Conditions: 150 mM KOAc, 10 mM MgCl2 and 150 mM bicine (pH 8.5), 24 C. Structure probing data (DMS and 2A3) for a 207-nucleotide construct. The 2A3 profile rests on 3,176 reads. The DMS profile rests on 2,946 reads. 2A3 adducts were read by reverse transcription with SuperScript II with manganese. Values cover nucleotides 27 to 156. For DMS the reverse transcriptase was MarathonRT. The data come from the RNA Mapping Database (RMDB), library OK3TST.
RNA sequence: GGGAACGACUCGAGUAGAGUCGAAAAGAGCUCGAGAUGCCAUUGUAGACUGUUACAGCAUCUGCUAUCAGUCUGAGAUAGCUCAGGAUAGCUGGAGCUAUCUGCAACGGUGCAGACUCCAGUGACACCGUGAACAAUGGUUCAUGUCACCGAGCAGCGUCACGGGAAUGUUCGCAUUCUCGUGACGAAAAGAAACAACAACAACAAC
Reactivity to DMS in 0.01 (KOAc 150mM, MgCl2 10mM, bicine 150mM(pH8.5), 24C), signal-to-noise 2, nucleotides 027 to 156: g000a300g000c000u000c010g000a240g020a250u000g000c000c000a040u010u000g000u000a020g020a060c020u000g000u000u020a030c000a030g010c110a070u000c130u020g040c040u010a000u000c000a060g040u000c070u000g000a180g000a020u000a000g000c000u000c000a150g010g000a120u000a150g030c010u000g030g010a040g010c020u000a010u000c000u020g010c020a070a080c090g010g020u000g020c000a170g020a210c020u010c020c070a130g020u000g020a090c030a070c040c020g000u010g000a130a030c010a070a040u000g030g050u010u000c050a070u010g010u000c040a120c050c010g000a040g020c010a060g000
Reactivity to 2A3 in 0.01 (KOAc 150mM, MgCl2 10mM, bicine 150mM(pH8.5), 24C), signal-to-noise 4, nucleotides 027 to 156: g090a010g000c000u000c010g060a060g010a090u060g000c000c000a010u000u010g000u020a020g000a000c020u010g030u140u140a090c080a050g010c040a150u190c210u280g010c010u030a040u040c000a010g050u000c020u030g000a010g000a020u040a000g000c010u010c010a020g030g070a210u180a180g100c040u070g090g020a030g000c010u010a010u010c000u010g020c000a040a040c060g010g040u030g000c010a010g030a240c030u040c080c020a020g020u000g050a020c010a000c000c010g010u020g010a020a000c000a000a000u010g010g000u060u090c050a050u120g060u050c020a020c150c040g000a000g000c010a010g050